RNA sequence: GGGAACGACUCGAGUAGAGUCGAAAACCAGGUCCUUCGGGACCUGGAAAAAGCGUACUACGCAUAGAGGAUGAACUACCUACGGGUCCCAAAUAGGACCUUGUAGGCAUCUACCCACCUAUGCGUAUCGCAAAAAAUGGCGGUUUCGACCGCCAAACAUUAUACUUGUCUUCGGACAAGUAUAAUGAAAAGAAACAACAACAACAAC
Reactivity to DMS in 0.01 (KOAc 150mM, MgCl2 10mM, bicine 150mM(pH8.5), 24C), signal-to-noise 2, nucleotides 027 to 156: c010c010a000g020g020u010c000c000u000u000c280g050g040g050a000c000c000u020g000g000a000a000a040a130a140g020c020g020u000a110c090u000a030c000g030c000a010u000a020g010a300g020g020a130u000g000a120a160c020u000a020c010c000u000a000c000g000g040g020u000c000c000c020a040a180a250u000a040g000g010a040c010c010u000u010g050u000a000g010g010c010a030u000c080u010a080c010c020c010a180c040c010u000a010u000g020c010g000u000a020u000c020g060c030a000a020a050a080a130a090u000g000g000c000g000g000u000u000u000c170g010a060c030c000g000c000c000a000a010a080
Reactivity to 2A3 in 0.01 (KOAc 150mM, MgCl2 10mM, bicine 150mM(pH8.5), 24C), signal-to-noise 4, nucleotides 027 to 156: c000c000a000g010g010u020c010c010u170u300c300g050g000g000a000c000c010u010g000g000a090a010a010a010a010g030c030g020u070a100c060u000a000c040g000c010a010u000a000g030a010g030g010a010u040g000a110a120c120u120a100c190c000u010a000c000g000g010g010u010c010c010c040a160a270a070u250a090g000g000a000c010c000u060u300g010u000a000g000g000c010a010u000c000u030a100c020c030c010a090c040c010u020a000u000g000c010g000u000a000u080c020g000c000a000a000a000a000a030a180u070g000g000c010g000g020u020u100u110c170g100a020c000c000g000c010c010a000a000a000
Chemical mapping of a 207-nucleotide RNA with DMS and 2A3.
For 2A3 the reverse transcriptase was SuperScript II with manganese.
For 2A3, 3,830 sequencing reads were counted.
The RNA was probed in 150 mM KOAc, 10 mM MgCl2 and 150 mM bicine (pH 8.5) at 24 C.
High DMS reactivity at an A or C suggests that its Watson-Crick edge is free.
Reactivities are rounded to 0.1 and cut off at 0 and 3.
DMS adducts were read by reverse transcription with MarathonRT.